An RNA of 207 nucleotides, treated with 2A3 and read out base by base.
[RMDB]
RNA sequence: GGGAACGACUCGAGUAGAGUCGAAAAACAUAGGCCAUGCUUACGAGCAUGGCCUAUGACGAAUCUCAAGCAAUCAAGCAUUCUACUUCUAUUGCCACACUGAGGAGCUUACGAGCUCCUCAGUGAAAAAAGAGAGUAAUGUUCGCAUUACUCUCAAGACUGUGUAUCAGUUCGCUGAUACACAGUCAAAAGAAACAACAACAACAAC
Reactivity to 2A3 in 0.01 (KOAc 150mM, MgCl2 10mM, bicine 150mM(pH8.5), 24C), signal-to-noise 1, nucleotides 027 to 156: a000c040a010u020a000g000g000c000c000a030u000g000c000u220u010a200c300g060a010g000c000a020u010g000g010c000c010u000a000u000g000a000c000g070a010a010u020c030u010c080a080a040g010c030a040a000u060c020a030a040g110c040a130u110u140c000u060a030c050u120u130c010u020a100u040u060g000c020c020a060c000a040c080u000g000a000g000g000a000g000c010u090u040a120c230g030a010g010c000u000c000c000u000c000a000g000u000g000a020a000a000a000a000a000g000a010g000a000g000u000a000a000u030g050u050u100c100g030c170a000u000u000a030c000u000c000u000c000a030a020
Background: The RNA was probed in 150 mM KOAc, 10 mM MgCl2 and 150 mM bicine (pH 8.5) at 24 C.